Notes: The data come from the RNA Mapping Database (RMDB), library OK2TRN. The record gives the reactivity of an RNA of 177 nucleotides to 2A3 and DMS. Values cover nucleotides 27 to 126. The 2A3 profile rests on 2,546 reads.
[RMDB]
RNA sequence: GGGAACGACUCGAGUAGAGUCGAAAAGCGCGUUAAUACGGCCGGUAUGCCUUCUUGCCCAACAAUAUGAGGUCGUAGCGUGUGGGGGAAGGGACACCGUCGUUUUGUUAAAGAAGGUAUAUUGCGCCGAGGCAAAUAGAUUCGUCUAUUUGCCUCGAAAAGAAACAACAACAACAAC
Reactivity to 2A3 in 0.01 (KOAc 150mM, MgCl2 10mM, bicine 150mM(pH8.5), 24C), signal-to-noise 2, nucleotides 027 to 126: g040c040g020c000g030u020u080a040a010u130a070c020g000g000c040c010g000g020u010a010u070g090c010c000u000u010c000u000u120g060c000c010c000a000a000c020a000a030u060a020u060g060a060g110g120u220c000g000u000a010g010c010g000u080g040u050g030g010g000g010g010a020a030g000g000g010a000c010a000c010c000g040u020c000g000u030u040u010u030g040u000u110a090a090a010g080a040a020g010g030u060a060u000a020u080u100g020c000g000c000
Reactivity to DMS in 0.01 (KOAc 150mM, MgCl2 10mM, bicine 150mM(pH8.5), 24C), signal-to-noise 2, nucleotides 027 to 126: g000c020g000c020g020u000u010a050a080u000a090c050g000g000c040c020g030g020u000a020u000g010c010c000u000u000c000u000u020g000c030c070c040a060a060c070a050a210u010a020u000g000a200g000g000u010c000g030u000a080g000c230g000u000g000u010g010g000g000g000g000a080a030g000g000g000a030c030a020c020c010g020u000c020g010u000u000u000u000g020u000u010a100a070a090g000a050a040g000g000u000a030u000a050u010u000g020c040g000c010